[RMDB]
This 177-nucleotide RNA was probed chemically with 2A3 and DMS. It was measured as part of the RMDB library OK1LIB. In probing experiments dimethyl sulfate is read out at A N1 and C N3, which are open when not base-paired. Reactivities are given for positions 27 through 126.

RNA sequence: GGGAACGACUCGAGUAGAGUCGAAAAUGCUACUUGUGUGAGAAUACUUUUAGUACAAGCGAGUACACGCAGUAUACUGCCACGUGUGUGAGAAUACUUUUAGUACAAGCGAGUACACGCAGUAUAGAGCACAAAGGGAGUUCGCUCCCUUUGUGCUAAAAGAAACAACAACAACAAC
Reactivity to 2A3 in 0.01 (KOAc 150mM, MgCl2 10mM, bicine 150mM(pH8.5), 24C), signal-to-noise 2, nucleotides 027 to 126: u070g010c000u000a050c000u090u080g010u020g000u040g130a010g040a230a030u100a110c080u010u040u000u240a100g000u060a010c070a030a040g070c010g040a000g020u000a020c000a000c060g000c020a000g010u030a000u000a080c000u030g030c020c030a130c100g120u090g000u000g000u010g110a030g010a130a080u030a050c010u050u110u090u190a040g000u050a030c010a050a080g100c020g090a020g000u000a000c020a020c000g000c000a000g000u000a040u060a070g020
Reactivity to DMS in 0.01 (KOAc 150mM, MgCl2 10mM, bicine 150mM(pH8.5), 24C), signal-to-noise 2, nucleotides 027 to 126: u000g000c120u000a050c050u010u040g000u000g020u000g020a220g010a080a100u000a020c020u000u000u000u000a150g000u000a000c080a080a120g000c000g000a300g000u000a000c000a040c080g050c260a080g000u010a020u020a050c120u000g010c060c170a110c130g010u030g050u050g040u060g000a260g000a030a010u020a000c000u000u000u010u000a150g000u040a000c180a100a300g010c010g000a300g000u000a020c020a110c120g000c220a000g040u010a000u020a030g040